[RMDB]
RNA sequence: GGGAACGACUCGAGUAGAGUCGAAAAUCAUAACGCAUACCAUCGCAUUAAUUCCUGCACCUAAUAUUUCGUAGUUGGUUAGGUUCAUAGCCUUCGUCCGGCAAAGGGGCCGUUGCGGGUAAGCACCACUACCGGAGCAAUUCGUUGCUCCGGUAGUAAAAGAAACAACAACAACAAC
Reactivity to 2A3 in 0.01 (KOAc 150mM, MgCl2 10mM, bicine 150mM(pH8.5), 24C), signal-to-noise 6, nucleotides 027 to 126: u130c050a040u090a200a050c050g000c010a020u040a100c010c030a060u100c020g000c030a020u030u150a080a090u110u060c000c000u030g000c010a040c010c010u030a050a080u070a210u140u200u160c160g080u070a100g040u070u050g050g010u030u020a040g000g000u000u050c040a060u160a080g020c010c000u050u080c050g140u050c040c050g010g000c000a090a040a060g020g000g030g000c020c030g020u010u050g010c020g000g000g010u020a060a000g040c040a030c050c020
Reactivity to DMS in 0.01 (KOAc 150mM, MgCl2 10mM, bicine 150mM(pH8.5), 24C), signal-to-noise 3, nucleotides 027 to 126: u010c130a040u030a070a050c150g030c020a040u000a070c020c050a080u040c030g030c010a060u010u030a060a250u010u010c030c010u010g020c080a080c000c000u000a030a040u030a030u000u020u040c100g010u020a070g000u020u000g000g010u000u000a050g000g010u010u000c060a100u010a190g000c030c010u010u000c110g010u000c090c050g030g000c040a130a070a090g010g020g000g040c010c020g000u000u010g020c040g010g000g000u000a040a080g020c020a120c110c070
Structure probing data (2A3 and DMS) for a 177-nucleotide construct. For 2A3, 5,156 sequencing reads were counted. Values are in units of 0.01, from 0 to 300, in steps of 10. The reactions ran in a buffer of 150 mM KOAc, 10 mM MgCl2 and 150 mM bicine (pH 8.5), at 24 C.